[RMDB]
RNA sequence: GGGAACGACUCGAGUAGAGUCGAAAAGGAACGUUGUUCGCAACGUUCCGUGCCGGAAACGGACAUGACGAUCGCGCGCAUGUCGGGAAACCCUAAACGCGAGCAUCAUGGUGUUCGCACCAUGAAAAUAACCUGCAGAUUUCGAUCUGCAGGUUAUAAAAGAAACAACAACAACAAC
Reactivity to 2A3 in 0.01 (KOAc 150mM, MgCl2 10mM, bicine 150mM(pH8.5), 24C), signal-to-noise 2, nucleotides 027 to 126: g000g000a000a000c000g000u010u010g030u060u060c240g030c110a000a000c010g000u000u020c000c000g000u030g040c020c020g130g060a110a100a030c040g050g010a020c010a010u030g070a110c000g020a060u030c010g000c000g000c000g000c010a010u010g000u000c010g000g000g010a140a090a050c040c010c030u120a170a180a030c020g020c000g000a010g040c030a090u030c000a000u000g000g000u030g010u030u040c140g000c070a000c000c000a010u000g010a050a010a000
Reactivity to DMS in 0.01 (KOAc 150mM, MgCl2 10mM, bicine 150mM(pH8.5), 24C), signal-to-noise 4, nucleotides 027 to 126: g000g000a010a000c000g020u000u010g010u000u020c200g020c000a020a010c000g000u010u000c000c000g010u000g000c020c040g010g000a090a100a120c070g010g020a040c020a020u000g010a120c040g000a070u000c040g000c000g010c030g020c010a030u000g000u010c030g000g000g010a100a080a130c040c010c040u010a050a110a050c020g000c010g000a040g020c300a170u000c000a010u000g010g020u000g000u000u000c180g000c020a030c000c010a000u000g000a030a060a100
Structure probing data (2A3 and DMS) for a 177-nucleotide construct. The reactions ran in a buffer of 150 mM KOAc, 10 mM MgCl2 and 150 mM bicine (pH 8.5), at 24 C. Source: RMDB library M2PK50, as collected in RNAgym. DMS adducts were read by reverse transcription with MarathonRT. DMS (dimethyl sulfate) methylates the pairing face of unpaired adenines and cytosines.